[RMDB]
RNA sequence: GGGAACGACUCGAGUAGAGUCGAAAACACGUACGCUGGGCCUUGAAAAAAUUUGACCAGCAUCGAUCUACGCUGAAGCGCGCACGGCGUAGGGAGCUGGUAACCGCAGCUAGGCCUGUGCUGAAGCGCGCACGGCAACCGAAAGGUGCGUCAUCAAGCUCAUAUGAACGUUCGCGUUCAUAUGAGCAAAAGAAACAACAACAACAAC
Reactivity to 2A3 in 0.01 (KOAc 150mM, MgCl2 10mM, bicine 150mM(pH8.5), 24C), signal-to-noise 2, nucleotides 027 to 156: c050a000c010g210u300a020c050g000c000u030g000g010g020c010c030u060u070g080a130a050a030a090a200a130u270u130u300g140a090c050c070a010g000c060a080u250c030g050a050u000c010u010a000c030g000c000u010g040a130a050g000c010g000c000g000c000a020c020g020g000c020g000u000a000g000g030g020a020g000c010u000g000g050u050a080a060c080c090g070c110a070g070c060u010a010g010g000c000c000u050g040u040g000c090u060g060a060a020g000c000g000c000g000c000a000c020g070g000c010a040a020c010c000g000a080a000a000g020g000u020g000c000g060u050c010a090u100c030a010a130

Structure probing data (2A3) for a 207-nucleotide construct. The 2A3 profile rests on 1,180 reads. Values cover nucleotides 27 to 156. The data come from the RNA Mapping Database (RMDB), library RNAMAK.